[RMDB]
RNA sequence: GGGAACGACUCGAGUAGAGUCGAAAAGUCAUGAUGAAAUCUUCCAGGGGUAAGCUGGGUACUUUGGAUUAAGCUACACUUUGGUUUGUCCAAAUGCACUUUCCAGUAUGCUUACCAUGUUACAACUUAUCUCCUCUAUACGUGUGUAGAGAGAUUACUCACUAGGUCAGUUCGCUGACCUAGUGAGAAAAGAAACAACAACAACAAC
Reactivity to 2A3 in 0.01 (KOAc 150mM, MgCl2 10mM, bicine 150mM(pH8.5), 24C), signal-to-noise 1, nucleotides 027 to 156: g120u070c110a080u050g110a050u080g060a050a000a300u080c080u140u050c100c060a090g000g070g000g000u000a000a080g020c000u000g000g020g020u050a030c060u000u020u000g000g010a010u090u190a140a000g020c000u080a010c040a020c300u140u300u220g010g010u000u000u090g010u010c010c000a030a030a030u100g000c030a010c060u020u170u070c010c010a040g010u170a120u270g000c000u010u000a010c010c000a000u050g060u030u070a120c080a170a060c160u040u050a030u090c040u050c020c030u060c010u010a030u010a060c200g140u270g030u020g000u240a000g000a000g000a000g000a050u000u000a010